Source: RMDB library M2PK50, as collected in RNAgym. This 177-nucleotide RNA was probed chemically with DMS and 2A3. Reactivities are given for positions 27 through 126. For 2A3 the reverse transcriptase was SuperScript II with manganese.
RNA sequence: GGGAACGACUCGAGUAGAGUCGAAAAUCAGGUCACUUCGGUGACCUGAAAACAAGGAACGAAAAGGAAAACCUAACCAAGGAAUAUGGAAACCAAAAUAAAAAACCAUAGCCUUCGGGCUAUGGAACUUGAGUAAUGUCUUCGGACAUUACUCAAGAAAAGAAACAACAACAACAAC
Reactivity to DMS in 0.01 (KOAc 150mM, MgCl2 10mM, bicine 150mM(pH8.5), 24C), signal-to-noise 1, nucleotides 027 to 126: u000c010a010g000g020u000c000a010c000u000u010c220g070g000u000g000a030c000c000u020g000a000a040a160a100c050a080a080g010g010a140a110c180g000a060a030a020a140g030g000a070a060a100a130c040c010u000a090a220c130c060a050a120g000g000a120a040u000a030u000g030g000a110a080a070c080c100a000a000a050a090u080a030a050a110a070a120a170c000c000a000u000a000g000c000c000u000u010c170g010g000g000c010u000a000u000g000g000a010a000
Reactivity to 2A3 in 0.01 (KOAc 150mM, MgCl2 10mM, bicine 150mM(pH8.5), 24C), signal-to-noise 2, nucleotides 027 to 126: u020c000a000g010g010u010c000a020c030u020u080c220g090g020u020g010a000c010c020u000g000a020a000a000a000c040a020a020g070g010a080a050c050g080a050a080a070a070g050g000a080a090a000a010c010c020u010a050a090c000c020a010a040g090g050a170a060u150a060u220g050g060a040a090a000c020c020a080a030a150a040u210a080a130a020a000a000a030c000c000a000u010a020g000c000c030u050u120c300g120g000g000c010u020a020u020g000g020a020a010